[RMDB]
Chemical mapping of a 177-nucleotide RNA with 2A3 and DMS.
The data come from the RNA Mapping Database (RMDB), library RFMREP.
DMS adducts were read by reverse transcription with MarathonRT.
Values cover nucleotides 27 to 126.
2A3 is a SHAPE reagent: it acylates the 2'-hydroxyl of flexible nucleotides of all four kinds.
Conditions: 150 mM KOAc, 10 mM MgCl2 and 150 mM bicine (pH 8.5), 24 C.
RNA sequence: GGGAACGACUCGAGUAGAGUCGAAAAGAACGAUAGCAGCAUGAACCUGUCUCACUGCAGAAUUAUUUUGAGACAGGCUUAUGCUGCUAUCCUUCAAAACGUGCGAGAUCCUUCGGGAUCUCGCACGGAUUAUAUACAAGUUCGCUUGUAUAUAAUCAAAAGAAACAACAACAACAAC
Reactivity to 2A3 in 0.01 (KOAc 150mM, MgCl2 10mM, bicine 150mM(pH8.5), 24C), signal-to-noise 2, nucleotides 027 to 126: g020a010a020c000g010a010u000a000g000c010a000g000c000a000u000g010a020a020c010c000u010g010u020c000u000c000a050c040u090g040c090a100g280a200a110u290u150a130u060u160u090u060g000a000g000a000c000a000g010g000c000u000u000a000u000g000c000u010g010c010u000a000u010c000c000u000u020c000a020a040a000a000c010g000u010g010c020g000a000g070a010u040c030c030u080u170c300g050g020g000a020u040c010u000c020g040c040a010c010g000
Reactivity to DMS in 0.01 (KOAc 150mM, MgCl2 10mM, bicine 150mM(pH8.5), 24C), signal-to-noise 1, nucleotides 027 to 126: g010a000a000c260g000a010u010a000g030c000a000g000c000a000u000g010a010a010c000c000u000g020u000c000u000c000a030c250u000g000c170a130g000a160a140u000u000a080u010u000u010u000g000a010g010a000c000a010g020g020c010u000u000a000u000g010c000u000g020c000u000a000u000c000c000u000u000c000a110a060a050a300c000g040u010g000c000g030a010g050a010u000c000c000u000u020c210g030g010g020a010u000c000u010c010g000c000a000c030g000